[RMDB]
RNA sequence: GGGAACGACUCGAGUAGAGUCGAAAAGAAGCUGACACGCCCGGCGACGAGUGGGCAGAGAUCGACGUCGCCGACACUGAAGCCGACAGAAUCGCCCGCAAGCGCGACCGCGAGUUCGAGCAGUUCGCUCCUCCCUGGCAUUCGUGCCAGGGAGGAGAAAAGAAACAACAACAACAAC
Reactivity to 2A3 in 0.01 (KOAc 150mM, MgCl2 10mM, bicine 150mM(pH8.5), 24C), signal-to-noise 1, nucleotides 027 to 126: g120a160a000g040c030u070g030a000c000a020c090g090c010c000c000g020g030c000g020a060c030g030a030g180u120g030g160g010c030a010g000a000g020a240u170c010g000a010c000g000u020c040g030c030c000g070a000c000a000c070u050g040a060a000g050c050c040g000a040c020a010g100a080a030u010c000g000c000c000c000g000c000a080a040g140c000g000c020g070a070c070c000g070c000g080a030g100u090u030c050g090a080g030c010a000g050u060u180c080g000